[RMDB]
RNA sequence: GGGAACGACUCGAGUAGAGUCGAAAAGGUUCUCCUGCUCUUCCGGAGCCUUCUUUCGAGGUCUUCCGCGUCUUUUCUUGCUUGGAUCCAUUUCUCGAGGACGUCCUCCCUUCCUCCCCUCCGGGUCGAUUAACUAGUUCUUCGGAACUAGUUAAUCAAAAGAAACAACAACAACAAC
Reactivity to DMS in 0.01 (KOAc 150mM, MgCl2 10mM, bicine 150mM(pH8.5), 24C), signal-to-noise 4, nucleotides 027 to 126: g010g010u000u010c030u000c030c060u000g020c070u000c040u000u010c080c070g010g000a100g010c080c020u000u000c090u000u010u010c070g010a070g010g010u000c050u000u000c030c030g020c120g010u000c040u010u000u010u000c050u000u010g000c060u010u010g010g000a090u000c030c070a130u000u000u000c010u010c030g010a060g000g000a150c080g000u000c030c040u000c000c010c020u000u000c010c010u000c010c040c010c010u000c010c010g010g010g010u000c120
Reactivity to 2A3 in 0.01 (KOAc 150mM, MgCl2 10mM, bicine 150mM(pH8.5), 24C), signal-to-noise 4, nucleotides 027 to 126: g030g010u060u050c020u020c020c010u040g020c030u020c030u170u020c040c030g020g020a020g010c000c000u050u050c010u040u130u090c060g020a020g010g030u010c020u080u020c040c010g030c030g060u020c040u040u120u070u040c040u060u110g030c020u030u040g050g020a040u060c020c010a090u100u100u030c020u010c010g020a020g050g050a120c010g030u010c000c000u010c000c000c010u030u020c000c010u000c000c000c010c000u000c000c010g030g010g020u060c030
Overview
An RNA of 177 nucleotides, treated with DMS and 2A3 and read out base by base. For 2A3 the reverse transcriptase was SuperScript II with manganese. The reactions ran in a buffer of 150 mM KOAc, 10 mM MgCl2 and 150 mM bicine (pH 8.5), at 24 C. The data come from the RNA Mapping Database (RMDB), library 15KREP. The DMS profile rests on 7,556 reads.